[RMDB]
RNA sequence: GGGAACGACUCGAGUAGAGUCGAAAACAGAACUGGAUGGGUCGUGUGCUUAACCAGGACAAGAUCUCCUUCUCUCCAACGUUGUUGCCAACUCAUGAUUCUCCUAACCUGUGCUUGGAGAGACGUGCUACCAUAUAGGUGUUCGCACCUAUAUGAACGUCUUAGUACAGUUCGCUGUACUAAGACGAAAAGAAACAACAACAACAAC
Reactivity to 2A3 in 0.01 (KOAc 150mM, MgCl2 10mM, bicine 150mM(pH8.5), 24C), signal-to-noise 2, nucleotides 027 to 156: c080a020g070a040a040c050u080g010g040a040u070g130g020g050u030c060g100u110g090u170g160c030u070u090a050a050c020c060a070g030g030a030c060a110a040g030a110u000c060u010c050c010u060u000c030u010c000u020c000c020a070a070c170g000u000u000g010u010u000g040c090c060a080a070c050u030c090a080u060g080a290u080u010c030u060c020c020u080a090a160c020c040u050g140u150g160c090u090u060g000g000a010g000a000g040a020c000g000u050g020c030u090a130c040c000a000u010a000u000a000g030g000u010g020u030u060c190g020c050a000c010c000u010a000u000a000u000g000a010a030
Reactivity to DMS in 0.01 (KOAc 150mM, MgCl2 10mM, bicine 150mM(pH8.5), 24C), signal-to-noise 1, nucleotides 027 to 156: c050a100g030a060a090c060u000g010g000a100u000g000g000g000u000c030g030u000g040u000g030c000u010u000a110a080c130c210a110g010g010a080c020a020a100g000a060u000c030u000c010c020u000u000c000u000c030u000c000c000a050a180c120g000u020u000g020u000u000g020c000c000a050a140c020u020c040a050u010g010a120u010u000c010u030c050c000u000a030a120c010c050u020g030u000g020c020u000u020g030g010a090g000a050g000a050c050g050u000g000c040u000a110c040c030a020u000a000u000a000g000g040u000g000u010u000c290g020c020a020c010c020u010a000u000a000u000g000a030a170
An RNA of 207 nucleotides, treated with 2A3 and DMS and read out base by base. For 2A3 the reverse transcriptase was SuperScript II with manganese. High DMS reactivity at an A or C suggests that its Watson-Crick edge is free. Conditions: 150 mM KOAc, 10 mM MgCl2 and 150 mM bicine (pH 8.5), 24 C. Values cover nucleotides 27 to 156. It was measured as part of the RMDB library M2RFPK. DMS adducts were read by reverse transcription with MarathonRT.